[RMDB]
RNA sequence: GGGAACGACUCGAGUAGAGUCGAAAAACUGCCAUACGUGGCAGAAACACGCCUUACCAGGACUAAACAGCGUGUCUAAAAAACAGUCCUUCAUACCUGAUCUGGAAGGUAGAUCAGGAAUACUAAAAAAAUCGGGUGAAGUUCGCUUCACCCGAAACCUGAUGGAUUAGUUCGCUAAUCCAUCAGGAAAAGAAACAACAACAACAAC
Reactivity to 2A3 in 0.01 (KOAc 150mM, MgCl2 10mM, bicine 150mM(pH8.5), 24C), signal-to-noise 1, nucleotides 027 to 156: a010c000u000g020c000c000a000u010a080c200g080u060g000g020c000a000g040a000a010a000c000a000c000g010c000c000u030u040a010c000c030a000g000g000a020c000u070a110a050a050c020a010g000c030g000u010g020u080c190u050a010a010a000a000a000a000c040a000g010u010c010c000u030u120c090a120u070a060c000c000u000g000a000u020c000u000g010g090a070a050g080g020u030a030g000a000u000c020a000g020g010a000a010u090a030c040u080a080a000a000a050a000a000a150u060c000g000g000g010u000g000a000a000g010u040u140c200g010c080u000u000c000a000c000c000c000g000a000a000a000